[RMDB]
RNA sequence: GGGAACGACUCGAGUAGAGUCGAAAAACAGGACGAUUCGUCGUCCUGUAAAAACCGUAGGCGAUACGGCAGCAUCGAUCGACUACUUCGAAAGAGGUAUCUGUCGGGAGCUGGGUAUCGCCUAAACGGAAAAAAGGAGCAGAUUCGUCUGCUCCAACCUAUUAAGGUGGUUCGCCACCUUAAUAGGAAAAGAAACAACAACAACAAC
Reactivity to DMS in 0.01 (KOAc 150mM, MgCl2 10mM, bicine 150mM(pH8.5), 24C), signal-to-noise 2, nucleotides 027 to 156: a040c000a010g000g020a020c010g030a080u000u000c300g030u000c010g050u010c010c000u000g040u010a000a050a040a090a010c000c000g000u010a040g020g020c010g020a030u000a010c000g010g000c020a050g020c000a120u000c020g000a020u010c300g000a030c140u000a050c000u010u000c010g010a150a100a210g010a050g030g000u000a030u010c020u000g010u000c010g010g010g000a150g060c040u000g020g050g010u000a020u000c010g010c000c000u010a000a000a040c000g010g000a020a020a050a060a190a150g020g010a000g010c000a040g030a050u010u010c170g010u000c000u000g000c000u000c000c000a000a050
Reactivity to 2A3 in 0.01 (KOAc 150mM, MgCl2 10mM, bicine 150mM(pH8.5), 24C), signal-to-noise 1, nucleotides 027 to 156: a000c010a000g010g000a000c000g010a010u010u090c260g010u010c000g010u010c130c000u010g010u000a010a000a000a010a020c020c010g010u010a010g030g000c010g000a010u000a000c090g170g060c170a010g000c000a110u060c020g010a020u010c010g000a050c190u000a000c000u020u010c020g080a090a080a080g000a020g000g030u010a020u050c040u050g000u010c000g020g030g000a200g000c000u000g020g000g030u000a010u010c000g060c000c000u000a000a000a000c010g000g000a080a000a000a030a030a140g010g020a000g000c030a000g000a050u130u170c240g100u010c110u000g020c000u000c000c000a000a010
Structure probing data (DMS and 2A3) for a 207-nucleotide construct. The reactions ran in a buffer of 150 mM KOAc, 10 mM MgCl2 and 150 mM bicine (pH 8.5), at 24 C. For 2A3 the reverse transcriptase was SuperScript II with manganese. It was measured as part of the RMDB library RNAMAK.